[RMDB]
RNA sequence: GGGAACGACUCGAGUAGAGUCGAAAACAAAGGGCUGCACCAUGUGAUCAACCUCUUUUUGAUGUUUGAAUCAAUGUAGCAUAUCUUGCUUUUCCUGGUUAGAAGACGUAGGUUGUGUGCAUGGGAAGGAUGAGUGCUAUUUCGAUAGCACUCAUCCAAAAGAAACAACAACAACAAC
Reactivity to 2A3 in 0.01 (KOAc 150mM, MgCl2 10mM, bicine 150mM(pH8.5), 24C), signal-to-noise 1, nucleotides 027 to 126: c000a000a070a000g100g070g000c040u050g010c080a050c010c010a020u030g040u010g070a120u050c010a000a030c030c000u040c150u040u120u100u170u050g090a040u040g170u100u300u240g200a030a050u050c040a040a050u250g160u240a000g040c040a000u030a100u230c100u040u080g040c000u030u020u050u090c010c070u120g110g000u060u060a070g000a040a000g020a030c040g000u140a070g090g020u000u030g000u000g020u130g030c020a020u000g080g000g000a010a050
Reactivity to DMS in 0.01 (KOAc 150mM, MgCl2 10mM, bicine 150mM(pH8.5), 24C), signal-to-noise 2, nucleotides 027 to 126: c100a060a130a110g000g020g000c120u000g000c150a240c010c010a040u000g000u000g010a100u000c010a000a020c020c030u000c040u010u020u000u000u000g030a060u000g000u000u020u000g020a080a040u010c060a020a050u010g020u000a080g010c090a050u000a110u020c130u000u010g010c000u000u000u020u010c030c090u000g020g000u000u010a100g000a050a040g030a040c140g010u010a020g020g020u000u000g010u000g030u020g000c020a030u000g000g030g020a170a160